[RMDB]
RNA sequence: GGGAACGACUCGAGUAGAGUCGAAAAGAUAUGGAAGUAGAUCAACAGCGAUCAGUCGGAAACGACUGAAUCGACAUGAUUUUCCUAAGUCAAAAGGGCUGACACGUCUUCGGACGUGUCAGCCCAACAUAAUACAGCACUUCGGUGCUGUAUUAUGAAAAGAAACAACAACAACAAC
Reactivity to DMS in 0.01 (KOAc 150mM, MgCl2 10mM, bicine 150mM(pH8.5), 24C), signal-to-noise 1, nucleotides 027 to 126: g000a040u000a230u000g010g010a020a050g020u010a190g010a000u000c010a020a080c300a130g010c000g000a000u010c010a010g000u000c000g000g010a090a090a130c000g020a020c000u000g000a030a020u020c010g000a060c070a170u000g000a030u000u000u010u000c000c000u000a030a100g010u010c040a040a070a140a140g010g010g020c000u040g010a010c000a010c040g000u000c000u000u030c240g010g010a000c000g000u000g020u000c030a030g000c010c000c000a000a000
The record gives the reactivity of an RNA of 177 nucleotides to DMS. The reactions ran in a buffer of 150 mM KOAc, 10 mM MgCl2 and 150 mM bicine (pH 8.5), at 24 C. Reactivities are given for positions 27 through 126. Values are in units of 0.01, from 0 to 300, in steps of 10.